Chemical mapping of a 177-nucleotide RNA with 2A3 and DMS.
RNA sequence: GGGAACGACUCGAGUAGAGUCGAAAAGGGUGUUCCGCCCCCCGAGAGGGGACGAGUGAGGCUUAUCCCGGGGAACUCGACUUAUCGUCCCCAUCUAGCGGGACCCCGGACCCCCUUCGAAAGUGACCCUUUAAGAUUUGUUCGCAAAUCUUAAAGGAAAAGAAACAACAACAACAAC
Reactivity to 2A3 in 0.01 (KOAc 150mM, MgCl2 10mM, bicine 150mM(pH8.5), 24C), signal-to-noise 1, nucleotides 027 to 126: g040g020g000u130g010u060u020c010c000g020c020c010c000c000c030c020g080a100g010a020g040g000g000g000a000c000g000a000g090u230g020a000g030g050c070u180u140a130u220c050c000c020g030g020g010g020a120a060c010u000c020g150a110c040u150u150a080u140c000g010u010c020c030c010c000a020u000c050u000a010g020c000g020g000g000a020c010c000c000c040g050g010a050c000c000c060c000c020u020u060c040g120a160a050a080g100u090g110a070c000
Reactivity to DMS in 0.01 (KOAc 150mM, MgCl2 10mM, bicine 150mM(pH8.5), 24C), signal-to-noise 2, nucleotides 027 to 126: g000g000g020u020g010u010u000c000c000g000c010c040c000c000c030c060g000a100g010a110g020g010g020g010a010c020g010a040g010u000g020a050g010g020c110u000u010a120u010c030c010c000g000g030g020g000a140a100c040u000c030g010a090c080u010u010a170u000c010g010u000c000c000c000c000a060u000c070u010a080g020c020g010g010g010a060c010c010c010c010g000g000a220c060c020c010c040c040u010u000c040g020a060a120a120g010u000g000a120c160
It was measured as part of the RMDB library VIROID.